[RMDB]
RNA sequence: GGGAACGACUCGAGUAGAGUCGAAAAAAACUCGUUCUUUUCGAGUUGGGUAGAGUUCUACCAAAUGUUUUGUUGCAGUUCUAUACUGAAACGAGGCAUGUACUUCCUGUAUUUAUUUUGACCUGUCCUCUUGCCUAUUCUUCGGAAUAGGCAAGAGAAAAGAAACAACAACAACAAC
Reactivity to 2A3 in 0.01 (KOAc 150mM, MgCl2 10mM, bicine 150mM(pH8.5), 24C), signal-to-noise 1, nucleotides 027 to 126: a000a000a000c030u000c000g000u130u070c030u000u180u050u060c000g030a010g000u000u100g090g000g000u020a020g030a200g060u160u000c040u040a030c020c050a070a000a070u000g030u000u000u000u000g010u000u000g040c000a000g000u070u140c120u220a060u090a140c000u000g000a050a000a000c010g000a000g000g010c000a000u030g040u060a030c030u010u010c000c000u020g130u070a120u010u170u000a180u010u300u030u050g200a130c100c070u020g080u130c030
Reactivity to DMS in 0.01 (KOAc 150mM, MgCl2 10mM, bicine 150mM(pH8.5), 24C), signal-to-noise 1, nucleotides 027 to 126: a030a030a020c060u000c000g000u010u000c080u000u000u010u000c000g020a020g000u010u000g000g000g000u000a000g000a240g010u000u030c020u000a020c000c030a120a090a040u000g000u010u010u000u000g000u000u020g000c010a020g010u000u010c230u010a130u030a040c010u000g020a050a000a010c000g010a010g000g010c010a020u000g000u000a090c170u000u000c000c000u000g000u000a070u020u010u000a100u040u000u040u000g000a120c080c060u000g000u000c070